[RMDB]
Chemical mapping of a 207-nucleotide RNA with 2A3 and DMS. Reactivities are rounded to 0.1 and cut off at 0 and 3. Conditions: 150 mM KOAc, 10 mM MgCl2 and 150 mM bicine (pH 8.5), 24 C. The data come from the RNA Mapping Database (RMDB), library OK3TST. For 2A3, 1,715 sequencing reads were counted.
RNA sequence: GGGAACGACUCGAGUAGAGUCGAAAACUGCUAUGCUCACAGCCUAGGGGUGACUAAAGCUGGCCACCUUGCCCUUUCCUGAGAACACACUGGGUCUGGUAUACAUGUGCCCAGAAGGGGCCCUGAGAGCCCCUUCUACCCUCAUACUGUCCCCUCAUAUGAAUCAAUGGUUCGCCAUUGAUUCAUAAAAAGAAACAACAACAACAAC
Reactivity to 2A3 in 0.01 (KOAc 150mM, MgCl2 10mM, bicine 150mM(pH8.5), 24C), signal-to-noise 2, nucleotides 027 to 156: c020u020g010c030u100a030u150g050c000u070c040a070c010a020g010c020c010u060a060g030g010g030g000u050g020a040c040u170a120a040a060g090c060u040g000g030c030c000a050c010c000u040u050g020c000c000c030u030u040u080c010c030u110g040a040g050a110a010c040a000c010a020c120u040g000g010g020u010c050u010g020g050u050a070u050a150c060a050u080g010u060g000c010c000c010a010g020a000a000g010g000g010g000c050c030c060u210g060a130g010a050g050c020c000c020c000u010u010c000u010a020c000c000c010u040c000a060u100a160c030u050g100u040c020c020c030c010u050c010a030
Reactivity to DMS in 0.01 (KOAc 150mM, MgCl2 10mM, bicine 150mM(pH8.5), 24C), signal-to-noise 2, nucleotides 027 to 156: c020u000g020c010u000a060u010g030c010u000c060a130c070a120g020c030c040u000a120g000g000g020g020u010g010a060c020u000a080a030a140g040c080u010g000g010c010c020a040c030c010u000u000g030c000c010c030u000u000u000c050c040u000g010a140g020a050a130c030a050c050a070c070u000g000g000g030u000c040u020g010g000u000a110u010a050c100a110u020g010u010g020c030c030c050a150g000a010a030g000g000g000g010c020c020c010u000g010a220g000a170g010c000c020c010c000u010u000c010u000a060c020c000c020u000c010a080u000a050c020u010g020u000c000c020c000c020u020c070a250